Conditions: 150 mM KOAc, 10 mM MgCl2 and 150 mM bicine (pH 8.5), 24 C. An RNA of 177 nucleotides, treated with DMS and 2A3 and read out base by base. For DMS the reverse transcriptase was MarathonRT. For 2A3, 1,661 sequencing reads were counted.

[RMDB]
RNA sequence: GGGAACGACUCGAGUAGAGUCGAAAAACAAAUACUCACGCUGCUAGGCGGGUGCGCACUGCUGUCUGGCCCGGCGCCGCGCUAGGGCGCACACCUAGCGUUGCAAAGGGUAACCGGGCUGUAAAAAGGAUAUUCUACCUUUCGAGGUAGAAUAUCCAAAAGAAACAACAACAACAAC
Reactivity to DMS in 0.01 (KOAc 150mM, MgCl2 10mM, bicine 150mM(pH8.5), 24C), signal-to-noise 2, nucleotides 027 to 126: a060c090a090a050a070u000a030c040u000c000a120c170g000c060u000g030c070u000a110g020g000c080g010g000g020u000g020c020g020c030a180c070u000g000c010u000g000u000c040u010g020g000c010c000c010g020g010c300g010c020c080g000c030g030c020u000a000g000g020g000c080g000c100a030c080a150c010c000u000a010g010c010g040u000u000g000c050a090a270a110g020g000g020u000a090a120c050c000g000g010g000c010u010g020u010a020a050a060a120a040
Reactivity to 2A3 in 0.01 (KOAc 150mM, MgCl2 10mM, bicine 150mM(pH8.5), 24C), signal-to-noise 1, nucleotides 027 to 126: a000c010a010a100a010u070a050c020u010c020a040c030g070c080u090g070c070u120a040g030g070c010g050g000g010u050g010c060g030c030a090c070u090g000c000u010g080u170c080u100g010g010c000c000c000g010g010c040g020c000c000g000c010g000c000u000a000g030g070g000c080g070c000a050c020a020c000c010u000a000g010c000g000u000u010g000c020a040a060a090g040g000g040u000a000a000c020c010g010g030g000c030u030g050u120a060a080a020a030a030